Background
Structure probing data (DMS and 2A3) for a 177-nucleotide construct. Source: RMDB library OK1LIB, as collected in RNAgym. For DMS, 1,239 sequencing reads were counted.
RNA sequence: GGGAACGACUCGAGUAGAGUCGAAAAGUGACGUGCGUCGUCAGCGCUUGUGUUGGUACAGUCCGGUGACAGACCAUGUCUUGCUCGUCAACCCACGUGGACAAAAGAGCACCGAACACACGCUGGAAAAUGGUCCAUCGUUCGCGAUGGACCAUUUAAAAGAAACAACAACAACAAC
Reactivity to DMS in 0.01 (KOAc 150mM, MgCl2 10mM, bicine 150mM(pH8.5), 24C), signal-to-noise 1, nucleotides 027 to 126: g040u040g000a000c050g030u000g010c050g000u000c070g000u070c000a030g060c030g010c200u030u000g000u000g000u000u000g000g000u050a050c030a110g000u000c010c010g050g010u010g030a150c190a040g030a070c040c120a020u060g000u000c110u020u080g000c020u000c080g000u030c010a080a160c120c000c070a090c050g010u000g010g020a060c030a020a030a160a060g020a090g010c070a030c000c000g010a040a000c010a030c120a130c030g000c020u000g000g000a040
Reactivity to 2A3 in 0.01 (KOAc 150mM, MgCl2 10mM, bicine 150mM(pH8.5), 24C), signal-to-noise 2, nucleotides 027 to 126: g120u080g000a000c020g010u040g090c170g050u070c030g000u050c070a050g010c010g000c020u140u080g000u010g040u020u150g070g100u130a020c000a060g000u030c040c010g010g030u030g000a010c040a080g010a050c030c000a030u110g060u070c050u000u140g030c010u040c050g110u130c000a090a150c040c020c010a060c120g100u190g020g020a070c050a060a060a120a050g070a010g020c000a050c000c020g100a050a030c050a030c000a000c030g040c010u060g040g000a000